[RMDB]
RNA sequence: GGGAACGACUCGAGUAGAGUCGAAAAGGCCAGGCGCAGUGGCUCACGCCUGGAGUCCUAGCACUUUGGGAGGCCAAGGCGGGUGGAUCACGAGGUCGGGACUUCGAGGGCAGCCUGGCCAACAUGGUACCCCAGUAGGCUUCGGCCUACUGGGGUAAAAAGAAACAACAACAACAAC
Reactivity to 2A3 in 0.01 (KOAc 150mM, MgCl2 10mM, bicine 150mM(pH8.5), 24C), signal-to-noise 2, nucleotides 027 to 126: g000g000c020c010a020g040g000c130g030c030a160g090u090g030g090c020u000c090a030c000g050c000c000u000g000g000a000g000u000c010c000u000a090g040c050a050c110u000u060u000g010g000g000a040g100g210c110c040a050a040g110g010c060g080g000g000u120g090g000a020u010c090a000c210g000a080g040g000u000c010g000g000g000a000c000u010u000c060g160a050g000g130g030c010a000g080c000c000u070g000g000c040c000a000a000c030a050u180g080g020

Structure probing data (2A3) for a 177-nucleotide construct. It was measured as part of the RMDB library OK1LIB.